The record gives the reactivity of an RNA of 207 nucleotides to 2A3.
Reactivities are given for positions 27 through 156.
The reactions ran in a buffer of 150 mM KOAc, 10 mM MgCl2 and 150 mM bicine (pH 8.5), at 24 C.

RNA sequence: GGGAACGACUCGAGUAGAGUCGAAAAGUGAUUAAUCGGCCGCCCGAUUUGUACUGCGGCCCUUGCCCGAAUGAGCUGGACGACGGCGAGCGGUGCGGCAUGGAUUUGCGCGCGGAGGCUGACGAGCGGAUGGUGCAGUGUCGCCGUUGCCGCGCGGGAAUUCCCACGUAUUCGUACGUGGGAAUUCAAAAGAAACAACAACAACAAC
Reactivity to 2A3 in 0.01 (KOAc 150mM, MgCl2 10mM, bicine 150mM(pH8.5), 24C), signal-to-noise 2, nucleotides 027 to 156: g050u050g040a110u140u250a120a050u060c020g070g000c030c000g000c000c000c060g000a080u000u100u110g040u040a080c050u120g100c030g000g000c050c030c000u130u150g020c020c020c050g020a210a180u240g040a050g020c040u040g020g020a020c030g000a050c020g040g020c000g040a010g000c020g050g040u280g070c020g010g000c030a020u070g030g080a060u030u050u220g030c000g010c000g000c010g040g020a040g020g080c170u200g000a010c090g000a060g060c030g070g110a190u140g080g110u230g080c040a060g130u010g010u250c010g010c000c000g010u000u090g000c000c000g000c000g000c000g000g030